[RMDB]
RNA sequence: GGGAACGACUCGAGUAGAGUCGAAAAGAUAUGGAUCCCACUACCCACCAUCUCCCUUCGGAAACGAAGGGAGAUGAGGUGGGAGUCCUAAGUCAAACGACGUGGUACCUUCGGGUACCACGUCGAAUCAGAUCAUAUGGUUCGCCAUAUGAUCUGAAAAAGAAACAACAACAACAAC
Reactivity to 2A3 in 0.01 (KOAc 150mM, MgCl2 10mM, bicine 150mM(pH8.5), 24C), signal-to-noise 2, nucleotides 027 to 126: g050a020u270a130u300g020g000a020u020c010c040c000a030c000u270a270c010c040c020a050c000c020a030u000c010u000c000c020c010u000u000c020g020g010a080a080a050c010g000a000a000g020g000g000a000g000a000u000g000a000g000g010u000g000g010g000a010g100u020c000c000u110a190a090g140u050c050a160a100a100c060g010a000c000g000u000g050g030u010a020c020c050u030u110c300g120g000g000u000a000c020c000a000c020g000u010c020g000a000a000
Reactivity to DMS in 0.01 (KOAc 150mM, MgCl2 10mM, bicine 150mM(pH8.5), 24C), signal-to-noise 4, nucleotides 027 to 126: g020a130u020a180u000g010g010a260u010c000c020c010a070c020u000a080c010c000c020a300c060c020a010u000c000u000c000c010c000u000u010c000g000g000a160a060a150c010g000a010a000g000g000g010a000g000a000u000g010a040g020g000u000g010g010g010a030g000u000c010c010u000a080a160g000u010c080a090a100a250c010g000a000c000g000u000g000g010u000a000c000c000u000u010c170g020g000g020u000a000c000c010a000c000g000u000c000g000a010a070